Structure probing data (DMS and 2A3) for a 177-nucleotide construct. For 2A3, 3,811 sequencing reads were counted. Source: RMDB library OK1LIB, as collected in RNAgym. The reactions ran in a buffer of 150 mM KOAc, 10 mM MgCl2 and 150 mM bicine (pH 8.5), at 24 C.
RNA sequence: GGGAACGACUCGAGUAGAGUCGAAAAUGAUGCAAGACGCCGAACUGGGGGCCCUGCCGACAUUGCGUGCCGCCACCGAUCCCGCGGUGCGCGGCGGCCAGUACUUCGGACCCGAUGGCUUCGGUGAGGUAUGGCUAGUAUUCGUACUAGCCAUACCAAAAGAAACAACAACAACAAC
Reactivity to DMS in 0.01 (KOAc 150mM, MgCl2 10mM, bicine 150mM(pH8.5), 24C), signal-to-noise 3, nucleotides 027 to 126: u030g000a100u010g050c110a070a030g000a130c080g000c030c000g010a030a060c050u010g020g040g000g020g020c060c000c030u000g010c020c020g020a030c280a090u010u030g010c080g000u000g020c000c000g000c000c060a020c050c060g000a090u000c020c030c030g000c010g000g020u010g000c080g020c020g000g010c000g000g010c050c170a070g000u000a060c220u030u000c090g000g000a170c040c000c010g000a140u010g000g010c110u010u020c010g000g010u000g000a120
Reactivity to 2A3 in 0.01 (KOAc 150mM, MgCl2 10mM, bicine 150mM(pH8.5), 24C), signal-to-noise 4, nucleotides 027 to 126: u140g070a020u140g070c050a030a060g060a060c040g010c010c000g020a040a020c040u040g010g010g000g040g070c000c020c010u070g020c020c010g020a060c070a140u080u240g050c070g050u100g000c020c010g010c020c000a040c020c030g020a070u090c010c020c020g020c020g020g020u040g010c110g000c000g010g000c000g000g000c000c020a010g000u030a070c040u090u130c050g030g050a110c020c000c040g140a160u080g010g010c000u020u030c000g000g000u020g020a010